[RMDB]
RNA sequence: GGGAACGACUCGAGUAGAGUCGAAAACAAGUUCACGUCGCUGUCCAGCGGCUGAACCUCAUGCUGACGCGGUAACUGCGCGACCGGCUGCUGAACAAACGGAGGCCGCGCCUACAAGGGGGUAGAGUCAUAAUCCUCCGUCAGGAUAGGGCGGUUACUUAUAUCCCGACUUCGGUCGGGAUAUAAGAAAAGAAACAACAACAACAAC
Reactivity to DMS in 0.01 (KOAc 150mM, MgCl2 10mM, bicine 150mM(pH8.5), 24C), signal-to-noise 2, nucleotides 027 to 156: c020a120a080g010u000u010c030a060c150g070u000c010g010c000u020g000u000c120c090a120g040c000g030g060c000u010g010a010a030c020c030u020c040a110u010g030c050u000g000a160c040g000c040g030g000u000a090a190c120u010g000c030g050c070g020a070c050c010g010g010c000u010g020c020u020g000a100a130c130a090a050a040c040g040g000a100g000g030c040c010g000c050g030c020c040u000a070c030a110a100g000g000g020g050g000u000a100g020a130g020u010c080a060u000a130a110u000c000c010u000c000c030g020u010c050a060g050g010a150u000a050g010g010g020c010g000g000u000u020a060
Reactivity to 2A3 in 0.01 (KOAc 150mM, MgCl2 10mM, bicine 150mM(pH8.5), 24C), signal-to-noise 2, nucleotides 027 to 156: c040a000a050g020u030u010c010a010c120g000u010c010g010c030u010g140u160c020c120a000g000c000g000g000c010u000g000a010a000c000c020u120c040a070u190g000c010u030g020a040c030g040c040g060g040u140a300a170c090u190g040c060g020c010g100a180c170c000g040g000c000u060g020c070u060g060a080a040c080a160a090a020c080g030g010a070g080g000c010c000g000c020g210c000c000u040a030c040a130a150g030g040g000g000g000u060a030g040a050g240u100c060a050u080a150a040u070c000c000u000c020c000g090u100c070a110g030g110a180u040a020g000g000g010c000g000g030u030u020a000